[RMDB]
RNA sequence: GGGAACGACUCGAGUAGAGUCGAAAAUCGUAACGGGGCGAAAGCGUUGCUCGAACAGUUAGGGCUGGGUAAACGUCUGGAUCAUCUUCCGGCACAGCUUUCCGGCGGUGAACAGCAACGAGUGGCGAAUGCUGGUGAGCUUCGGCUCACCAGCAUUAAAAGAAACAACAACAACAAC
Reactivity to DMS in 0.01 (KOAc 150mM, MgCl2 10mM, bicine 150mM(pH8.5), 24C), signal-to-noise 1, nucleotides 027 to 126: u010c130g000u010a070a170c070g020g010g000g030c020g010a130a080a080g000c030g030u000u050g000c000u000c000g010a270a050c090a110g010u020u000a110g000g000g000c060u000g010g000g010u000a030a050a140c160g020u000c000u000g040g000a110u040c150a120u000c060u000u000c010c050g000g000c160a100c260a140g020c120u010u010u000c030c000g060g050c300g000g010u000g040a000a050c050a010g000c030a050a130c100g000a050g000u000g010g000c110g000
Annotation:
An RNA of 177 nucleotides, treated with DMS and read out base by base. Values cover nucleotides 27 to 126. Conditions: 150 mM KOAc, 10 mM MgCl2 and 150 mM bicine (pH 8.5), 24 C.